Structure probing data (2A3 and DMS) for a 177-nucleotide construct. The data come from the RNA Mapping Database (RMDB), library M2PK50. The DMS profile rests on 1,862 reads. Reactivities are given for positions 27 through 126. Reactivities are rounded to 0.1 and cut off at 0 and 3. Conditions: 150 mM KOAc, 10 mM MgCl2 and 150 mM bicine (pH 8.5), 24 C.

RNA sequence: GGGAACGACUCGAGUAGAGUCGAAAAGAGAGCUGCUUCGGCAGCUCUCCGUCAGGUAGUUCCUAUCUCAAUUACCUGUAGUGGCCAACGUCCGGAAAGGAAGAGAGCCCUGCUUCGGCAGGGCUAACCUUGAGUCUCUUUUCGAAGAGACUCAAGGAAAAGAAACAACAACAACAAC
Reactivity to 2A3 in 0.01 (KOAc 150mM, MgCl2 10mM, bicine 150mM(pH8.5), 24C), signal-to-noise 1, nucleotides 027 to 126: g010a010g020a010g020c020u000g030c010u080u070c230g100g000c030a000g030c000u000c000u010c000c000g030u020c000a010g000g040u030a000g000u080u100c050c040u090a170u170c100u050c060a020a060u040u020a010c000c010u050g030u060a080g080u090g120g000c010c030a140a020c110g040u000c000c030g100g060a270a070a020g060g020a090a080g040a000g000a000g060c000c030c000u000g010c000u040u070c140g040g000c000a000g060g000g000c000u000a000a000
Reactivity to DMS in 0.01 (KOAc 150mM, MgCl2 10mM, bicine 150mM(pH8.5), 24C), signal-to-noise 2, nucleotides 027 to 126: g010a030g010a000g030c000u000g020c000u010u000c210g020g020c020a000g010c000u000c000u000c000c040g010u020c020a020g010g000u000a020g010u000u000c090c100u010a160u000c110u000c080a090a050u000u000a010c030c010u010g000u010a100g020u010g010g000c040c010a090a080c160g000u000c020c010g000g020a070a100a140g000g010a090a130g000a090g000a040g020c000c000c000u000g020c000u000u020c170g020g010c010a000g010g000g020c000u000a000a030